[RMDB]
RNA sequence: GGGAACGACUCGAGUAGAGUCGAAAAGAUAUGGAAUACGAGAGCGCGACUCCGUUGAAAUCGGAAACGAUGGAGGAGUCGACCCGCUCGAGUAUUCCUAAGUCAAAUCGCAUCUUCGGAUGCGAAACAGUCUUGUAUCGUUCGCGAUACAAGACUGAAAAGAAACAACAACAACAAC
Reactivity to 2A3 in 0.01 (KOAc 150mM, MgCl2 10mM, bicine 150mM(pH8.5), 24C), signal-to-noise 1, nucleotides 027 to 126: g000a000u060a020u180g000g000a030a000u000a000c010g000a020g000a000g070c030g000c000g040a000c000u030c000c020g140u230u070g000a060a060a000u000c010g010g040a070a030a050c030g000a010u020g000g050a040g000g000a000g000u020c010g000a010c010c010c020g000c000u020c010g000a010g000u000a000u000u040c000c000u000a040a000g000u000c020a010a010a160u020c000g000c000a010u000c010u060u070c290g180g020a000u000g010c000g000a000a000a000
Reactivity to DMS in 0.01 (KOAc 150mM, MgCl2 10mM, bicine 150mM(pH8.5), 24C), signal-to-noise 2, nucleotides 027 to 126: g000a060u000a300u000g010g010a030a010u000a010c010g000a300g020a020g000c010g040c020g000a020c000u000c000c000g000u000u000g050a100a140a030u000c010g010g000a170a110a130c000g030a010u000g000g000a080g030g020a030g010u000c010g020a070c150c210c080g010c000u000c000g000a220g020u000a010u000u020c000c000u000a020a060g000u010c030a080a090a070u000c000g000c000a000u000c020u000u010c180g040g010a000u010g000c010g020a000a040a140